This 207-nucleotide RNA was probed chemically with 2A3 and DMS. It was measured as part of the RMDB library M2RFPK. For DMS, 6,138 sequencing reads were counted. Conditions: 150 mM KOAc, 10 mM MgCl2 and 150 mM bicine (pH 8.5), 24 C.

[RMDB]
RNA sequence: GGGAACGACUCGAGUAGAGUCGAAAACGGAAGAAUUAAAACCAUUCGAGCUAGUCAAUGCGUGGCGUGUCUCUCCGCAGCGUGUUGGCGAAUGUAAAGAGUGACUAAGCAUGUAGUACCGAGGAUGAUAAGAGCAAUUCGUUCGCGAAUUGCUCAACCUUUACAAGAACUUCGGUUCUUGUAAAGGAAAAGAAACAACAACAACAAC
Reactivity to 2A3 in 0.01 (KOAc 150mM, MgCl2 10mM, bicine 150mM(pH8.5), 24C), signal-to-noise 6, nucleotides 027 to 156: c040g060g050a050a020g040a010a100u170u140a080a090a030a060c060c030a020u070u080c050g030a040g060c040u080a020g030u020c000a000a010u010g010c000g010u020g120g000c000g010u060g040u010c020u000c010u020c060c010g000c010a010g010c010g000u020g010u010u000g010g000c010g000a010a010u050g020u050a030a050a040g020a010g010u030g010a010c040u070a060a030g030c040a060u090g040u110a050g020u040a070c040c070g000a040g060g010a030u110g020a030u100a200a120g000a000g000c000a000a000u000u000c000g010u040u050c120g000c000g090a000a000u000u000g000c000u000c000a000a000
Reactivity to DMS in 0.01 (KOAc 150mM, MgCl2 10mM, bicine 150mM(pH8.5), 24C), signal-to-noise 3, nucleotides 027 to 156: c060g000g030a070a090g000a090a100u010u000a070a070a060a110c060c040a070u010u010c100g020a170g020c020u000a160g020u000c020a040a030u010g020c010g020u000g020g030c030g000u000g010u000c110u010c040u010c200c000g030c040a040g000c030g070u000g030u000u000g010g000c020g010a060a050u010g020u010a050a120a130g010a070g020u000g000a070c050u010a080a090g020c040a070u000g020u020a100g000u010a070c010c030g000a120g010g000a060u000g000a110u010a070a140g000a020g020c000a030a020u000u000c000g010u000u010c300g040c020g030a020a010u000u000g010c000u010c000a000a050